[RMDB]
RNA sequence: GGGAACGACUCGAGUAGAGUCGAAAAUGAUGUGAACAUACUGUAGUAAUUGUGUAUUUAGUAAAUUGAGGGAACUUAGUUAUGUUCUACAGCUAAUAAACUUUCAAUUCAAGUUAAUUAUUUUUCAUUUAAAGGAGUCAUAGAAAACAACCUGAAAGAGUAUUACGACGUUCGCGUCGUAAUACUCAAAAGAAACAACAACAACAAC
Reactivity to 2A3 in 0.01 (KOAc 150mM, MgCl2 10mM, bicine 150mM(pH8.5), 24C), signal-to-noise 1, nucleotides 027 to 156: u050g010a000u080g030u050g070a080a000c020a040u120a030c030u100g080u110a110g010u070a100a050u150u090g030u010g100u100a070u140u220u070a020g040u040a040a100a160u120u100g000a020g020g010g000a010a010c030u000u000a000g140u040u070a050u090g020u080u000c000u110a100c030a000g000c000u040a040a040u070a070a220a020c010u030u110u020c010a000a170u090u000c070a140a000g010u020u230a060a120u100u210a030u000u150u010u000u050c030a020u180u010u050a090a090a020g000g030a010g010u040c030a070u030a160g110a030a150a060a020c060a090a050c000c010u120g040a100a030a040